Conditions: 150 mM KOAc, 10 mM MgCl2 and 150 mM bicine (pH 8.5), 24 C. Chemical mapping of a 177-nucleotide RNA with DMS and 2A3. For 2A3, 11,718 sequencing reads were counted. For DMS, 9,123 sequencing reads were counted. For DMS the reverse transcriptase was MarathonRT. Source: RMDB library M2PK50, as collected in RNAgym.
[RMDB]
RNA sequence: GGGAACGACUCGAGUAGAGUCGAAAAUAAUGCCACUUCGGUGGCAUUAGCAGGUACGAAAGCCCUAUCAAGUACAAAAUCCCAAAGAACAAGAUAGGCAAAUAAUGCAUAGCUUCGGCUAUGCAAACUCUCUAGAAGUAUUCGUACUUCUAGAGAGAAAAGAAACAACAACAACAAC
Reactivity to DMS in 0.01 (KOAc 150mM, MgCl2 10mM, bicine 150mM(pH8.5), 24C), signal-to-noise 6, nucleotides 027 to 126: u000a010a000u000g000c000c000a010c000u000u010c180g040g020u000g010g010c000a000u000u000a010g000c200a060g020g010u000a020c020g020a080a110a120g010c180c010c010u000a010u000c000a030a160g010u010a010c020a050a060a110a070u000c000c000c000a060a080a110g010a060a040c070a210a160g000a010u000a010g010g010c020a180a060a060u010a050a120u000g000c000a000u000a010g000c000u000u020c220g020g010c000u000a000u000g000c000a000a020a090
Reactivity to 2A3 in 0.01 (KOAc 150mM, MgCl2 10mM, bicine 150mM(pH8.5), 24C), signal-to-noise 6, nucleotides 027 to 126: u030a000a000u000g010c010c010a020c010u040u070c220g120g000u010g050g000c000a000u000u000a000g000c010a030g090g130u050a020c020g070a150a050a040g020c010c000c000u000a010u010c020a070a040g000u020a050c020a030a110a010a080u030c000c010c010a060a100a020g080a040a030c030a040a020g010a020u010a000g000g010c000a020a040a030u230a070a050u080g000c000a000u000a000g000c010u060u030c260g040g000c000u000a000u000g010c000a000a000a010